[RMDB]
RNA sequence: GGGAACGACUCGAGUAGAGUCGAAAAACAGUACCAGCUGCUACGGCAGCUGGUACUGGACUUUCAUGGAGUUAAGAAACCACGUAAACAAAGCGGAACCGAAAAGCUAAACGAGUAGGAAGAAUAAAUAGGUACCACCACUUCGGUGGUGGUACAACAACCAUAUAUUCUUCGGAAUAUAUGGUUGAAAAGAAACAACAACAACAAC
Reactivity to 2A3 in 0.01 (KOAc 150mM, MgCl2 10mM, bicine 150mM(pH8.5), 24C), signal-to-noise 3, nucleotides 027 to 156: a020c000a000g010u000a010c010c000a010g000c000u010g040c010u020a070c190g140g000c040a000g040c000u000g000g000u000a000c000u000g000g010a000c000u020u070u050c040a100u110g090g020a050g070u040u110a160a050g090a100a090a010c010c020a040c070g050u140a040a100a100c080a100a130a010g000c000g020g000a040a110c000c000g030a040a010a010a000g010c020u130a250a040a030c000g000a000g010u000a000g090g050a050a020g050a050a070u250a100a040a050u150a090g090g020u000a000c000c000a010c000c010a000c020u060u050c230g060g000u010g000g000u000g000g000u000a000c000a000a000
Reactivity to DMS in 0.01 (KOAc 150mM, MgCl2 10mM, bicine 150mM(pH8.5), 24C), signal-to-noise 2, nucleotides 027 to 156: a070c020a020g040u000a020c000c000a000g000c000u020g040c020u010a160c300g070g020c000a040g060c000u040g030g020u010a000c000u010g030g020a070c080u000u000u000c050a110u000g010g000a180g030u000u000a060a180g020a120a130a110c020c000a050c020g000u010a060a110a120c070a060a080a100g010c010g000g010a130a170c040c030g000a130a040a090a060g030c020u000a050a050a110c070g010a040g050u000a100g020g000a060a040g010a060a120u010a010a040a150u000a070g010g020u000a010c000c010a020c020c030a010c010u000u000c300g020g050u000g010g040u000g000g000u000a000c000a030a020